Source: RMDB library RNAMAK, as collected in RNAgym. Structure probing data (DMS and 2A3) for a 207-nucleotide construct. For 2A3, 1,871 sequencing reads were counted. The RNA was probed in 150 mM KOAc, 10 mM MgCl2 and 150 mM bicine (pH 8.5) at 24 C. For 2A3 the reverse transcriptase was SuperScript II with manganese. For DMS the reverse transcriptase was MarathonRT.
RNA sequence: GGGAACGACUCGAGUAGAGUCGAAAAUCCUAAGUCGUAUCAAGAGGAGGUAUGAGACAUGUCCUUCGGAAACGAAGGACAACAGCUCAUACUCCCCACCCUCGGGGAUACGAUAUGGAAAAAGGUAUCUAUGCUAGUUCGCUAGCAUAGAUACCAAUCAACAGAAGGGGUUCGCCCCUUCUGUUGAAAAAGAAACAACAACAACAAC
Reactivity to DMS in 0.01 (KOAc 150mM, MgCl2 10mM, bicine 150mM(pH8.5), 24C), signal-to-noise 2, nucleotides 027 to 156: u010c010c000u000a060a210g010u010c020g020u000a000u000c000a210a200g000a020g000g000a150g010g000u000a010u000g000a040g000a090c130a300u000g040u010c000c010u000u010c010g020g000a240a130a300c000g040a030a020g000g010a010c000a000a040c100a110g000c010u000c000a010u000a000c000u000c070c010c000c060a290c150c000c010u000c040g050g090g030g010a020u000a000c020g000a010u000a230u020g000g000a040a080a110a170a160g000g020u010a000u000c000u000a010u000g000c000u000a010g020u010u000c300g050c000u000a000g000c000a000u010a000g000a010u000a000c000c000a020a020
Reactivity to 2A3 in 0.01 (KOAc 150mM, MgCl2 10mM, bicine 150mM(pH8.5), 24C), signal-to-noise 2, nucleotides 027 to 156: u030c000c010u030a070a010g030u000c000g000u010a020u010c010a140a050g020a060g050g010a040g010g000u020a000u020g000a010g020a020c080a110u010g000u000c010c000u000u010c000g040g000a050a060a070c010g000a000a000g030g020a000c000a000a000c020a000g020c000u000c000a000u020a010c010u000c030c000c000c010a040c000c000c000u040c020g050g000g110g010a000u000a000c000g020a000u040a090u140g040g010a090a040a070a070a000g010g000u020a000u020c000u000a010u010g000c000u000a010g020u120u030c280g040c140u000a000g010c000a000u000a000g000a000u000a000c010c000a000a000